The record gives the reactivity of an RNA of 177 nucleotides to 2A3 and DMS. It was measured as part of the RMDB library OK1LIB. The RNA was probed in 150 mM KOAc, 10 mM MgCl2 and 150 mM bicine (pH 8.5) at 24 C. Values cover nucleotides 27 to 126.
RNA sequence: GGGAACGACUCGAGUAGAGUCGAAAAAUGGCAUUUAUGAAAGCAAACAUUGCUCAAAACAAUGAUAAAGAAAUGGAUUUAAUGAAUGCAUUUUAUUUAUUAGAUGCGGUAAAUAUACCGAUUGGAACGUCUAAGCUUCCUUCGGGAAGCUUAGACGAAAAGAAACAACAACAACAAC
Reactivity to 2A3 in 0.01 (KOAc 150mM, MgCl2 10mM, bicine 150mM(pH8.5), 24C), signal-to-noise 1, nucleotides 027 to 126: a000u020g120g000c000a000u010u000u090a060u030g070a060a040a000g220c000a000a170a000c000a000u000u000g010c000u080c150a090a070a000a000c000a000a090u010g060a000u140a000a260a240g020a000a010a040u020g060g060a050u030u000u030a020a180u020g000a000a000u010g000c000a000u030u020u020u030a200u010u000u150a190u020u190a000g070a080u130g090c020g000g100u080a080a100a040u190a090u160a120c000c010g000a000u030u080g040g060a050a060
Reactivity to DMS in 0.01 (KOAc 150mM, MgCl2 10mM, bicine 150mM(pH8.5), 24C), signal-to-noise 1, nucleotides 027 to 126: a070u010g000g000c000a000u030u000u010a170u030g000a070a080a150g070c230a080a180a030c010a000u000u000g050c000u000c290a030a130a040a250c140a030a080u000g000a270u000a110a010a050g000a000a040a040u000g000g000a150u000u000u070a040a040u000g120a000a000u000g010c000a000u000u000u000u000a070u010u030u000a050u000u000a150g000a110u050g000c000g030g020u040a000a150a260u000a080u030a180c010c000g000a110u000u000g040g000a010a120